[RMDB]
RNA sequence: GGGAACGACUCGAGUAGAGUCGAAAAUAGGUCACUUCGGUGACCUAAAAAAGCGUACUACCUUUUGACGCUCGAGUACUACCCACCGCUUCCCAAAUAGGAAGCGAGGUACGAGAGCGAUAAGGUAUCGCAAAAAACGUGUCGUUCGCGACACGAACACAUCCUAUCAGUUCGCUGAUAGGAUGUGAAAAGAAACAACAACAACAAC
Reactivity to DMS in 0.01 (KOAc 150mM, MgCl2 10mM, bicine 150mM(pH8.5), 24C), signal-to-noise 2, nucleotides 027 to 156: u000a000g040g000u000c010a020c000u000u000c300g070g000u000g030a020c000c000u000a000a010a050a090a020a060g000c000g000u000a090c180u000a030c010c000u000u010u000u020g020a170c070g010c000u000c020g000a300g020u000a020c020u000a060c000c000c000a300c180c000g000c020u000u000c000c000c020a060a140a300u000a030g000g010a020a000g000c000g000a010g030g040u000a050c000g000a300g000a040g030c000g000a060u000a010a020g030g030u000a040u010c000g020c020a000a060a030a010a030a120c030g000u000g010u000c010g010u000u030c190g020c010g000a030c010a000c010g000a030a190
Reactivity to 2A3 in 0.01 (KOAc 150mM, MgCl2 10mM, bicine 150mM(pH8.5), 24C), signal-to-noise 5, nucleotides 027 to 156: u090a000g000g000u000c000a010c010u030u060c300g070g000u010g010a020c000c010u020a010a000a000a000a000a000g050c040g020u080a110c050u010a010c060c010u040u060u080u170g300a140c040g000c000u000c000g010a020g010u000a010c000u070a070c010c050c030a040c020c000g000c010u000u020c000c020c020a210a300a210u230a110g000g010a000a000g000c010g000a020g000g000u000a000c000g010a010g000a000g040c000g000a010u020a010a010g030g000u000a020u240c080g000c000a050a030a010a020a030a020c010g000u010g000u000c010g000u050u090c240g000c000g100a000c000a000c000g010a060a000